[RMDB]
RNA sequence: GGGAACGACUCGAGUAGAGUCGAAAAUAGAACUCCCCUUUGUACAAAUGUAGUAGAUUAUUAUAAAAGACUUUGGUGGUAUCCUGAACAUUAACUCCUAUUGUAAUACAUGGGGAUGAGCUGUCAAAAGUCCAGUGCUAGCUUAAAACAUUGUAAAACCAUAUACGACGUUCGCGUCGUAUAUGGUAAAAGAAACAACAACAACAAC
Reactivity to 2A3 in 0.01 (KOAc 150mM, MgCl2 10mM, bicine 150mM(pH8.5), 24C), signal-to-noise 1, nucleotides 027 to 156: u220a030g030a040a020c010u150c000c000c000c000u080u070u100g030u030a060c050a010a170a070u110g000u060a010g030u020a090g030a120u160u150a050u130u050a020u290a250a080a100a100g030a010c010u140u150u020g000g000u010g000g000u000a040u050c030c010u040g040a070a020c030a040u000u250a100a060c040u060c010c010u080a130u070u040g000u040a040a040u040a220c030a040u040g080g000g000g010a000u020g000a000g000c000u000g000u110c010a010a000a200a000g030u000c020c030a030g010u010g040c000u020a070g030c030u020u050a150a200a000a000c030a010u070u100g020u060a000a080a000
An RNA of 207 nucleotides, treated with 2A3 and read out base by base. It was measured as part of the RMDB library OK3TST. The 2A3 profile rests on 507 reads. 2A3 adducts were read by reverse transcription with SuperScript II with manganese. The RNA was probed in 150 mM KOAc, 10 mM MgCl2 and 150 mM bicine (pH 8.5) at 24 C. Values cover nucleotides 27 to 156.